[RMDB]
Conditions: 150 mM KOAc, 10 mM MgCl2 and 150 mM bicine (pH 8.5), 24 C. Chemical mapping of a 177-nucleotide RNA with DMS and 2A3. For 2A3, 5,804 sequencing reads were counted.
RNA sequence: GGGAACGACUCGAGUAGAGUCGAAAAGAUCGUCUCUUCGGAGACGAUCAAAUAAAUCACAGGAAACGGCCAAAAGAGAAAAUCUCACCUGUGAAAUGGCCGAAACCCUCUGCUUCGGCAGAGGGAACCUAAUGUCAUUGUUCGCAAUGACAUUAGGAAAAGAAACAACAACAACAAC
Reactivity to DMS in 0.01 (KOAc 150mM, MgCl2 10mM, bicine 150mM(pH8.5), 24C), signal-to-noise 3, nucleotides 027 to 126: g010a040u000c000g000u000c000u000c000u000u020c210g030g000a010g020a000c010g030a010u000c000a020a080a030u000a030a150a210u010c020a040c000a020g000g020a170a080a130c090g000g010c000c020a010a060a070a090g010a020g000a130a050a160a170u010c010u010c020a290c030c000u000g000u000g020a040a110a070u000g000g020c000c010g010a080a100a070c000c000c010u000c000u000g010c000u000u010c200g010g000c000a000g000a010g010g010g000a000a020
Reactivity to 2A3 in 0.01 (KOAc 150mM, MgCl2 10mM, bicine 150mM(pH8.5), 24C), signal-to-noise 4, nucleotides 027 to 126: g010a000u000c000g000u000c010u010c000u030u050c210g040g000a010g000a010c000g000a010u000c000a000a000a000u010a000a010a000u070c010a010c010a010g040g050a220a260a080c030g040g000c020c000a030a040a090a020g040a020g060a080a270a280a300u090c020u000c020a050c010c000u020g000u010g040a070a030a020u080g010g000c000c000g000a080a060a060c000c010c000u010c010u020g010c000u020u050c190g110g000c000a000g010a000g000g000g000a000a000